[RMDB]
RNA sequence: GGGAACGACUCGAGUAGAGUCGAAAAGAGCAUUGUAUGAUCGGUAUAGAGAGAGGGAACAUUUUUUUCUUACUAAUGAUGUAUGAAAUCAUCAUGUAAAAACUCUCUCUAAGCUGCAUGGCUCAAAGGGAUAAGAAUUGUUCGCAAUUCUUAUCCCAAAAGAAACAACAACAACAAC
Reactivity to DMS in 0.01 (KOAc 150mM, MgCl2 10mM, bicine 150mM(pH8.5), 24C), signal-to-noise 3, nucleotides 027 to 126: g010a010g030c000a100u000u020g040u010a030u020g000a040u080c080g010g010u020a260u000a020g030a010g000a000g000a000g000g000g010a060a030c190a000u000u000u000u000u000u000u000c000u000u010a010c010u000a040a060u050g020a050u000g000u000a280u020g000a000a040a030u000c040a010u000c140a010u000g000u000a020a010a050a060a070c010u000c000u000c030u010c010u020a020a300g020c000u000g010c060a010u000g000g000c000u000c000a040a090a150
Reactivity to 2A3 in 0.01 (KOAc 150mM, MgCl2 10mM, bicine 150mM(pH8.5), 24C), signal-to-noise 5, nucleotides 027 to 126: g010a000g000c050a050u140u170g050u240a170u120g070a140u210c030g030g010u090a040u120a150g010a010g010a000g020a000g000g020g070a020a030c030a090u080u030u060u030u030u010u020c040u040u000a010c000u010a050a250u150g100a050u130g030u050a050u100g140a020a040a050u060c030a010u010c000a010u000g000u050a000a010a060a090a080c000u000c000u000c000u000c000u000a010a010g000c000u000g000c010a020u050g040g010c000u000c010a020a080a040
Source: RMDB library OK1LIB, as collected in RNAgym. Chemical mapping of a 177-nucleotide RNA with DMS and 2A3. For DMS the reverse transcriptase was MarathonRT. 2A3 adducts were read by reverse transcription with SuperScript II with manganese. As a SHAPE reagent, 2A3 marks flexible, mostly unpaired nucleotides at the ribose 2'-OH. The RNA was probed in 150 mM KOAc, 10 mM MgCl2 and 150 mM bicine (pH 8.5) at 24 C.